[RMDB]
RNA sequence: GGGAACGACUCGAGUAGAGUCGAAAAGGAUAAGUGUAAGGGAGUCUUUGGCCCAAGACAAUGGGAAGGUGGGCUUAGAAGCAGCCACCCUUUAACGAGUUCGUAACAGAUCACCCAUCGAGGUCAGAACCAUCGUAUCCUUCGGGAUACGAUGGUUAAAAGAAACAACAACAACAAC
Reactivity to DMS in 0.01 (KOAc 150mM, MgCl2 10mM, bicine 150mM(pH8.5), 24C), signal-to-noise 2, nucleotides 027 to 126: g000g010a030u030a020a140g000u000g010u010a150a070g010g000g000a150g000u010c070u020u010u000g020g050c050c000c080a080a050g000a130c290a100a100u010g000g000g000a110a080g020g000u000g010g000g000c020u000u000a050g010a060a090g030c120a090g040c010c040a100c010c000c000u010u000u000a160a020c110g020a090g000u000u010c010g000u000a090a120c090a120g010a050u010c050a090c060c000c040a150u020c020g000a090g000g000u000c070a110g020
Reactivity to 2A3 in 0.01 (KOAc 150mM, MgCl2 10mM, bicine 150mM(pH8.5), 24C), signal-to-noise 3, nucleotides 027 to 126: g030g010a040u070a120a020g080u030g080u190a030a030g050g030g000a040g030u010c000u030u060u020g050g010c000c000c000a000a020g050a010c000a020a060u080g010g000g020a000a020g140g000u060g010g000g020c050u010u030a050g030a100a000g050c060a010g020c000c020a060c010c000c000u000u110u000a050a020c030g010a030g030u040u040c010g010u020a000a050c010a000g040a030u060c030a020c050c010c010a060u050c040g020a040g000g110u040c040a010g060
An RNA of 177 nucleotides, treated with DMS and 2A3 and read out base by base. It was measured as part of the RMDB libraries RFM100 and RFMREP. DMS adducts were read by reverse transcription with MarathonRT. Reactivities are given for positions 27 through 126. 2A3 adducts were read by reverse transcription with SuperScript II with manganese. The reactions ran in a buffer of 150 mM KOAc, 10 mM MgCl2 and 150 mM bicine (pH 8.5), at 24 C.